[RMDB]
RNA sequence: GGGAACGACUCGAGUAGAGUCGAAAAGAUAUGGAGACAUACGACUUUUGACGAGUGCAUUCGGAAACGAAUGUUCGAUAAGUCGUGUCUCCUAAGUCAAAUCGUUAUGCGUUCGCGCAUAACGAAAGAGCUAACGGUUCUUCGGAACCGUUAGCUCAAAAGAAACAACAACAACAAC
Reactivity to 2A3 in 0.01 (KOAc 150mM, MgCl2 10mM, bicine 150mM(pH8.5), 24C), signal-to-noise 1, nucleotides 027 to 126: g050a010u010a050u130g010g050a020g010a010c020a090u300a050c020g030a040c040u060u260u140u200g210a230c070g010a030g130u190g000c000a000u000u000c030g000g050a060a080a060c010g020a000a010u000g000u030u050c010g030a090u030a300a000g010u000c000g060u010g090u000c000u000c010c000u010a080a030g060u080c060a060a000a190u090c020g000u000u000a010u000g000c000g030u050u040c210g040c000g010c120a000u010a000a000c020g000a000a010a000